Source information:
This 177-nucleotide RNA was probed chemically with DMS and 2A3. Conditions: 150 mM KOAc, 10 mM MgCl2 and 150 mM bicine (pH 8.5), 24 C.
[RMDB]
RNA sequence: GGGAACGACUCGAGUAGAGUCGAAAAGGGUUAAAUCCCACUUAACAAUUAAAAAAUUAAGCAAAAGACAACCACCUUUCCCGCUGACAAUAGCGUUAUCCCUCUGCACUUCGGUAAUAUGAGGGCAUCUAUUUGUAGCCUUCGGGCUACAAAUAGAAAAAGAAACAACAACAACAAC
Reactivity to DMS in 0.01 (KOAc 150mM, MgCl2 10mM, bicine 150mM(pH8.5), 24C), signal-to-noise 2, nucleotides 027 to 126: g040g030g010u000u000a060a090a060u020c000c080c050a140c130u000u000a010a000c020a100a070u020u060a000a040a030a070a140a260u010u020a040a050g000c020a010a080a190a060g010a070c070a020a090c020c030a040c000c010u000u000u000c060c000c000g000c080u020g000a020c170a120a080u040a020g020c070g000u000u010a100u010c000c000c030u000c000u000g000c060a090c020u000u030c090g010g020u000a000a100u060a060u070g000a020g000g000g030c300a020
Reactivity to 2A3 in 0.01 (KOAc 150mM, MgCl2 10mM, bicine 150mM(pH8.5), 24C), signal-to-noise 3, nucleotides 027 to 126: g030g000g000u040u060a060a080a070u080c010c010c020a010c000u030u050a070a020c010a040a230u170u230a140a040a040a010a020a080u070u150a040a000g040c060a070a040a100a010g050a090c050a040a020c060c000a000c020c000u000u030u040c000c000c010g000c050u050g060a050c080a120a160u080a160g040c030g020u090u050a060u070c000c000c000u000c020u010g000c000a020c040u010u040c120g080g000u040a040a010u090a100u300g000a010g000g000g010c010a030

For 2A3, 1,458 sequencing reads were counted. Reactivities are given for positions 27 through 126. The DMS profile rests on 1,726 reads.